[RMDB]
RNA sequence: GGGAACGACUCGAGUAGAGUCGAAAACAACCGGAUGUAUCGGUGUCCGCGGCAAUAGACUCGAUCAACGGUCGCUUGGAUUGUGAUGUUGCCGAUGAAGCGAGGUACUGCUCAUGAUGCGGGUAAAAGUGCUGUUAGAGUUCGCUCUAACAGCACUAAAAGAAACAACAACAACAAC
Reactivity to 2A3 in 0.01 (KOAc 150mM, MgCl2 10mM, bicine 150mM(pH8.5), 24C), signal-to-noise 2, nucleotides 027 to 126: c030a000a020c010c010g000g070a070u100g090u220a140u270c020g020g000u050g020u000c000c070g000c030g030g020c020a010a010u050a100g270a210c030u010c030g030a010u000c010a030a030c020g160g000u060c040g040c000u010u080g150g070a150u090u250g090u080g100a050u040g010u100u020g000c000c010g000a010u060g090a150a000g160c020g030a050g080g040u140a020c000u070g000c040u020c070a090u110g060a050u130g010c040g020g030g010u050a070a090a000
Reactivity to DMS in 0.01 (KOAc 150mM, MgCl2 10mM, bicine 150mM(pH8.5), 24C), signal-to-noise 2, nucleotides 027 to 126: c060a120a140c020c030g010g000a080u000g000u000a110u000c000g020g030u000g000u010c010c040g020c030g000g000c020a030a290u010a020g000a130c010u010c020g000a070u000c000a020a090c080g000g020u010c170g010c080u020u010g050g000a130u020u010g010u000g000a080u000g020u000u000g010c000c000g010a090u000g000a060a100g000c010g000a090g000g010u000a020c080u000g000c040u000c060a150u000g000a100u010g010c020g010g000g000u000a040a070a040

Record summary:
This 177-nucleotide RNA was probed chemically with 2A3 and DMS. Conditions: 150 mM KOAc, 10 mM MgCl2 and 150 mM bicine (pH 8.5), 24 C. The data come from the RNA Mapping Database (RMDB), library OK2TRN.